Chemical mapping of a 177-nucleotide RNA with DMS and 2A3.
RNA sequence: GGGAACGACUCGAGUAGAGUCGAAAAAAUGCGCCCGGCAACCGCUUCCGGCGAGAAGCCACCGAAAAUUACCGAAUGCACCGCGCCAAUACGGGCGCAGGCCAGCAUCGCAACCGCGGCUUCCGGAUGGCUAUUUAUGAUUCGUCAUAAAUAGCCAAAAAGAAACAACAACAACAAC
Reactivity to DMS in 0.01 (KOAc 150mM, MgCl2 10mM, bicine 150mM(pH8.5), 24C), signal-to-noise 3, nucleotides 027 to 126: a070a030u010g000c090g000c050c020c020g020g010c080a070a080c140c040g010c080u000u010c040c020g020g000c100g000a140g000a020a060g010c030c030a080c070c050g000a040a040a090a070u000u000a140c230c050g010a070a040u000g000c000a110c010c010g010c010g030c020c000a070a130u010a090c280g000g010g010c000g010c000a010g000g000c100c050a090g010c020a040u000c030g030c080a050a080c100c050g020c070g010g000c030u000u000c000c020g010g000a240
Reactivity to 2A3 in 0.01 (KOAc 150mM, MgCl2 10mM, bicine 150mM(pH8.5), 24C), signal-to-noise 2, nucleotides 027 to 126: a040a040u040g020c010g030c000c000c000g010g030c060a080a020c040c030g050c060u070u050c060c000g100g000c060g040a140g000a010a000g020c000c040a050c000c030g130a120a060a040a050u150u090a060c080c010g060a170a020u020g000c000a000c040c020g020c000g000c010c000a060a110u200a220c100g120g000g010c000g000c000a000g030g000c020c040a000g000c000a010u010c020g020c090a000a060c020c020g030c040g030g000c030u050u030c040c010g000g060a040

In probing experiments dimethyl sulfate is read out at A N1 and C N3, which are open when not base-paired.
Reactivities are given for positions 27 through 126.
The 2A3 profile rests on 1,508 reads.